[RMDB]
The data come from the RNA Mapping Database (RMDB), library M2RFPK. This 207-nucleotide RNA was probed chemically with 2A3. 2A3 adducts were read by reverse transcription with SuperScript II with manganese. For 2A3, 999 sequencing reads were counted.
RNA sequence: GGGAACGACUCGAGUAGAGUCGAAAAGAAGGGUGAAAGCCCUUGAUACUGUAGUGGAAAUUAUACAUAAGAAGAGUUCUGAGUUGCUUAAGCAGAACUAAAAUAAAAAGACAAGCAUUAUUACAAACAUGGCGAGGUAAGUUCGCUUACCUCGCAACAAGAGACCUUUCUUCGGAAAGGUCUCUUGAAAAGAAACAACAACAACAAC
Reactivity to 2A3 in 0.01 (KOAc 150mM, MgCl2 10mM, bicine 150mM(pH8.5), 24C), signal-to-noise 2, nucleotides 027 to 156: g000a000a000g010g000g020u060g030a080a000a000g030c010c000c030u000u000g030a030u060a070c040u070g050u150a090g010u060g060g050a040a060a010u070u030a130u110a100c040a030u200a090a000g030a150a020g010a000g050u000u000c000u020g050a050g060u070u030g060c010u030u010a080a030g000c000a010g000a030a000c020u070a010a060a000a000u060a000a130a000a010a000g000a010c060a010a000g010c000a010u020u100a040u060u120a170c110a030a090a000c040a090u110g060g000c000g000a000g000g000u000a000a000g000u060u130c130g010c070u000u000a000c010c000u000c000g000c000a000a000
Reactivities are given for positions 27 through 156.